[RMDB]
RNA sequence: GGGAACGACUCGAGUAGAGUCGAAAAAUUUGCCUCAUACAAGACCUUUACAAGAAAAUCAGAGUGUGAUUUGCCAGGGCCGGUUCCCCUUUCAUAUAAUCUGAAUUCAGAGCCGUAUUUAAAUCCACAUCGAUUAUUAGUUCGCUAAUAAUCGAUGAAAAGAAACAACAACAACAAC
Reactivity to 2A3 in 0.01 (KOAc 150mM, MgCl2 10mM, bicine 150mM(pH8.5), 24C), signal-to-noise 9, nucleotides 027 to 126: a000u110u090u140g030c020c000u040c020a050u090a130c050a040a050g050a080c010c010u090u120u100a070c080a100a060g060a090a120a050a030u050c020a020g060a060g100u080g010u030g050a080u040u070u100g040c020c030a050g010g020g000c030c010g040g000u020u030c020c000c000c000u020u150u080c050a030u080a010u030a210a110u060c040u050g070a120a090u130u070c010a030g010a010g050c020c010g020u010a050u000u130u060a060a110a040u050c020c010a040
Reactivity to DMS in 0.01 (KOAc 150mM, MgCl2 10mM, bicine 150mM(pH8.5), 24C), signal-to-noise 5, nucleotides 027 to 126: a080u020u010u000g000c010c000u000c050a060u030a110c080a080a070g000a080c050c010u020u000u030a080c140a100a090g010a060a020a060a080u000c030a030g020a150g010u010g020u010g010a050u000u010u010g000c050c080a060g010g000g000c050c010g000g000u000u000c010c010c010c060u000u020u010c050a030u030a040u020a080a080u000c060u000g010a080a090u020u020c030a070g010a080g000c030c030g000u020a040u020u020u010a030a100a070u010c040c060a200